[RMDB]
Conditions: 150 mM KOAc, 10 mM MgCl2 and 150 mM bicine (pH 8.5), 24 C. Chemical mapping of a 177-nucleotide RNA with DMS and 2A3.
RNA sequence: GGGAACGACUCGAGUAGAGUCGAAAAACGAACUGCUGCUCACCGGUGAACACGUCAGGCACGUUCACACCGGAGGCGAGCACCUGUCUGAGCUUCGUCAUGUAGUCCUCGUGGGGCACGAUGGUGACAUAGCGAUUAAGUUCGCUUAAUCGCUAUGAAAAGAAACAACAACAACAAC
Reactivity to DMS in 0.01 (KOAc 150mM, MgCl2 10mM, bicine 150mM(pH8.5), 24C), signal-to-noise 9, nucleotides 027 to 126: a090c060g000a070a080c100u000g010c070u000g010c010u000c030a160c010c010g010g010u000g000a050a110c290a020c020g010u000c060a160g010g030c180a060c020g000u000u000c150a300c020a030c020c010g010g000a220g000g010c080g000a030g010c020a040c080c050u010g000u000c040u000g010a080g010c080u000u000c030g000u000c040a050u000g020u000a070g010u000c010c020u000c120g010u010g000g010g000g010c050a040c050g010a070u000g000g010u000g000a160
Reactivity to 2A3 in 0.01 (KOAc 150mM, MgCl2 10mM, bicine 150mM(pH8.5), 24C), signal-to-noise 9, nucleotides 027 to 126: a000c030g030a030a020c040u070g010c020u030g000c010u040c040a170c030c000g000g010u020g020a040a020c030a000c060g030u030c050a100g250g080c160a010c020g000u030u040c060a020c000a010c060c010g030g020a060g070g030c060g030a010g000c000a020c010c010u100g050u060c050u080g050a040g030c040u040u040c030g030u020c010a040u080g080u140a050g040u040c000c010u050c060g090u190g010g010g020g020c030a010c070g070a050u080g010g030u010g010a020